[RMDB]
RNA sequence: GGGAACGACUCGAGUAGAGUCGAAAAGCAUCCUCUCACAGGAUUGUCUCUGUGUUCCGAAACUCCAACAGUAUUGCUUCGGGACACCUACAGCAAUACUGUAGGUAUAGAGAGUAGGAGAGGAUGGAGGAGUGACGGUGUUCGCACCGUCACUCCUAAAAGAAACAACAACAACAAC
Reactivity to DMS in 0.01 (KOAc 150mM, MgCl2 10mM, bicine 150mM(pH8.5), 24C), signal-to-noise 1, nucleotides 027 to 126: g010c040a030u000c000c000u010c010u000c030a170c090a030g030g030a120u000u000g000u000c000u000c040u010g110u020g040u000u010c000c020g010a010a060a020c050u000c230c170a180a040c130a180g060u000a170u000u000g000c030u000u000c190g020g000g000a030c140a030c000c000u000a000c070a000g000c020a070a030u020a300c000u000g000u000a010g000g000u000a060u000a070g000a000g000a020g000u000a240g020g000a020g000a000g000g000a010u000g000g000
Reactivity to 2A3 in 0.01 (KOAc 150mM, MgCl2 10mM, bicine 150mM(pH8.5), 24C), signal-to-noise 1, nucleotides 027 to 126: g000c020a000u010c000c020u000c000u000c000a180c020a100g080g130a300u100u200g150u000c000u000c010u020g020u010g000u050u000c000c000g000a020a000a000c020u090c100c090a120a080c000a150g120u090a120u090u230g010c000u000u010c000g010g010g000a040c010a000c000c000u000a010c020a000g040c060a020a160u050a130c000u000g000u000a000g010g020u030a010u160a030g070a010g000a040g090u090a060g020g020a000g000a000g000g040a010u000g000g000